[RMDB]
RNA sequence: GGGAACGACUCGAGUAGAGUCGAAAAGAUGGGGCAGGUGGGAAUAUACCUCGCCCACCACUUGCUCCUGAUUGAGAGAUAGACGGCGAGGGUCCGAUCAUACGAUAUAUUCCUGCUCAGCGUAUGAUCGGUUAUGAUACUUAAGACGAGCAGGAUAGAUACCGAGCUAGUUCGCUAGCUCGGUAUCAAAAGAAACAACAACAACAAC
Reactivity to 2A3 in 0.01 (KOAc 150mM, MgCl2 10mM, bicine 150mM(pH8.5), 24C), signal-to-noise 2, nucleotides 027 to 156: g120a010u060g000g040g000g020c030a060g030g020u000g010g030g130a040a030u180a000u010a200c000c000u000c000g020c000c000c000a000c000c000a000c000u000u000g000c000u000c000c040u060g120a060u090u080g130a060g010a000g000a020u110a080g070a060c030g010g000c000g000a010g000g000g000u020c000c000g000a000u000c000a000u000a010c010g010a010u080a010u000a050u220u180c000c000u000g000c000u000c000a010g020c000g000u000a000u010g000a000u000c000g000g000u000u000a010u000g000a000u080a090c150u200u200a090a070g100a070c080g000a020g000c000a000g000g000a000u000a020